An RNA of 177 nucleotides, treated with 2A3 and DMS and read out base by base. The 2A3 profile rests on 3,756 reads. DMS adducts were read by reverse transcription with MarathonRT. For DMS, 4,400 sequencing reads were counted. Source: RMDB library OK2TRN, as collected in RNAgym. The RNA was probed in 150 mM KOAc, 10 mM MgCl2 and 150 mM bicine (pH 8.5) at 24 C.
[RMDB]
RNA sequence: GGGAACGACUCGAGUAGAGUCGAAAAAAAGAGUGCGUAAUAGCUCACUGGUCGAGUGACUCCGCGCCGAAAAUGUACCGGGGCUAAACGUAUCACCGAAGCUGUGGGUGGACACCAUCAGGUGUCCCACGUGCCUAUUGUUCGCAAUAGGCACGUGAAAAGAAACAACAACAACAAC
Reactivity to 2A3 in 0.01 (KOAc 150mM, MgCl2 10mM, bicine 150mM(pH8.5), 24C), signal-to-noise 3, nucleotides 027 to 126: a000a000a000g160a020g020u090g000c030g020u070a070a070u050a190g000c020u030c050a100c070u150g140g000u050c060g030a100g070u040g060a060c040u000c040c020g030c010g010c040c010g060a090a070a020a060u170g030u080a060c020c010g040g000g030g000c040u050a120a080a040c030g020u030a050u120c020a000c050c010g030a030a010g040c060u050g000u040g060g000g040u040g010g000a010c000a000c000c010a110u300c070a070g020g000u010g000u000c000c000
Reactivity to DMS in 0.01 (KOAc 150mM, MgCl2 10mM, bicine 150mM(pH8.5), 24C), signal-to-noise 4, nucleotides 027 to 126: a060a040a060g000a050g040u000g000c050g020u000a090a080u000a150g000c030u010c000a050c060u010g010g020u000c050g010a170g000u010g000a070c110u000c180c070g000c050g010c030c030g000a030a040a070a080u010g010u000a080c110c020g010g010g010g010c090u000a000a080a070c090g010u000a070u000c040a070c010c020g000a080a070g000c040u000g010u000g000g000g000u000g010g000a020c000a010c000c010a150u000c250a110g030g010u000g000u000c000c010